[RMDB]
RNA sequence: GGGAACGACUCGAGUAGAGUCGAAAACGCGAUCAACGUCCUCAACCACUGAACUGGUGUAUGGCGCGUCCUGAAGCUGGAAUGCAGCGCCGGAAAUCUUUACCGUCAACCACUUAUCCGACGUAGCCGUUGGAAUCGCUUUCGAGCGAUUCCAACGAAAAGAAACAACAACAACAAC
Reactivity to 2A3 in 0.01 (KOAc 150mM, MgCl2 10mM, bicine 150mM(pH8.5), 24C), signal-to-noise 1, nucleotides 027 to 126: c060g010c000g040a070u090c020a030a000c050g010u020c000c010u070c000a060a070c070c030a000c080u180g070a240a040c020u030g050g020u020g050u100a130u150g020g000c030g000c030g070u000c000c010u060g140a080a040g020c020u040g000g100a130a080u190g070c040a020g020c050g070c050c000g050g020a020a040a010u050c030u030u070u040a040c020c060g020u020c030a020a020c000c010a050c010u130u100a050u050c040c020g000a050c040g050u020a030g030c000
Reactivity to DMS in 0.01 (KOAc 150mM, MgCl2 10mM, bicine 150mM(pH8.5), 24C), signal-to-noise 2, nucleotides 027 to 126: c060g020c010g010a040u020c090a050a120c050g000u000c020c040u010c090a140a130c070c020a060c080u040g000a090a080c050u000g020g010u010g030u010a130u000g020g020c030g000c070g000u000c060c050u000g020a040a110g010c100u000g000g010a120a100u000g010c090a150g010c090g020c010c010g000g000a080a050a070u000c070u000u000u010a070c070c030g000u000c110a050a140c080c100a040c090u010u010a060u010c060c040g000a060c100g010u000a070g020c090
An RNA of 177 nucleotides, treated with 2A3 and DMS and read out base by base. For DMS, 1,224 sequencing reads were counted. Values cover nucleotides 27 to 126.